[RMDB]
RNA sequence: GGGAACGACUCGAGUAGAGUCGAAAACCGUAGGAUGGUCUGACUUCUUGGAUUUAUGGACUUCCCUAUGUUCGAAAGAGCAUAGAACAGUCCAUUGUCAGAAGUCGCAUCCUAAACGGAAAACAGAAGGCCGCAGCUUCGGCUGCGGCCUUCUGAAGCAUGAUUAAAAGUUCGCUUUUAAUCAUGCAAAAGAAACAACAACAACAAC
Reactivity to 2A3 in 0.01 (KOAc 150mM, MgCl2 10mM, bicine 150mM(pH8.5), 24C), signal-to-noise 1, nucleotides 027 to 156: c000c000g000u000a020g020g000a010u020g010g120u170c170u270g010a020c000u000u060c020u020u240g250g040a070u300u300u160a020u050g000g000a000c000u030u020c020c010c000u010a000u000g000u000u010c000g020a160a100a090g000a040g030c000a000u010a000g000a050a010c040a020g000u000c000c000a020u000u020g000u000c010a000g000a010a000g010u010c000g000c000a000u000c000c000u000a000a000a000c010g020g040a060a060a020a040c030a000g010a040a000g030g000c000c010g000c000a000g000c000u090u120c250g140g000c000u000g010c020g000g000c020c040u020u000c000u010g000a000a000

About this RNA:
Chemical mapping of a 207-nucleotide RNA with 2A3. It was measured as part of the RMDB library RNAMAK. The reactions ran in a buffer of 150 mM KOAc, 10 mM MgCl2 and 150 mM bicine (pH 8.5), at 24 C. 2A3 adducts were read by reverse transcription with SuperScript II with manganese.